Background: The data come from the RNA Mapping Database (RMDB), library OK3TST. The record gives the reactivity of an RNA of 207 nucleotides to 2A3 and DMS. Conditions: 150 mM KOAc, 10 mM MgCl2 and 150 mM bicine (pH 8.5), 24 C. Values cover nucleotides 27 to 156.
RNA sequence: GGGAACGACUCGAGUAGAGUCGAAAAGGAAUAAUGAUGGUACCUAAAUAAUAGAACUUCUGUGAACAAUGAAAGGGAACAACUGUGAGGUCUAACGGUUAGCUCUAGCUAUUCUUUUCCUGGUGGUGGUAGGAGGCAGGUUUUGGGUACCUUUAGAAUAGCCACUAAAUUUCGAUUUAGUGGCUAUAAAAGAAACAACAACAACAAC
Reactivity to 2A3 in 0.01 (KOAc 150mM, MgCl2 10mM, bicine 150mM(pH8.5), 24C), signal-to-noise 2, nucleotides 027 to 156: g060g010a060a080u140a140a080u170g090a020u090g030g000u040a010c000c010u020a060a070a030u110a060a070u100a140g050a090a050c030u090u080c060u090g120u080g050a100a010c020a040a140u170g040a080a090a010g060g010g000a020a020c020a040a020c040u050g040u080g140a030g040g040u030c020u050a050a050c030g010g030u020u010a000g000c000u020c050u110a030g010c010u040a040u070u050c020u040u080u020u020c000c010u030g020g040u060g000g020u020g000g020u030a040g030g030a010g050g000c040a020g020g000u000u080u100u030g000g000g000u000a000c020c000u020u090u020a030g050a040
Reactivity to DMS in 0.01 (KOAc 150mM, MgCl2 10mM, bicine 150mM(pH8.5), 24C), signal-to-noise 2, nucleotides 027 to 156: g010g010a180a120u000a080a060u020g000a100u000g000g030u000a060c020c020u000a010a050a070u000a070a190u010a120g010a070a080c030u000u000c040u000g000u010g010a080a070c040a090a140u000g010a060a050a060g030g020g010a050a080c030a020a050c040u000g000u000g020a050g020g010u000c040u000a080a080c080g020g010u000u010a060g020c020u000c040u000a060g010c030u000a050u000u000c010u000u010u000u010c000c010u010g010g040u000g000g020u000g040g010u000a080g020g010a070g040g010c070a070g010g000u000u000u000u030g030g000g020u000a040c030c000u000u000u020a080g010a130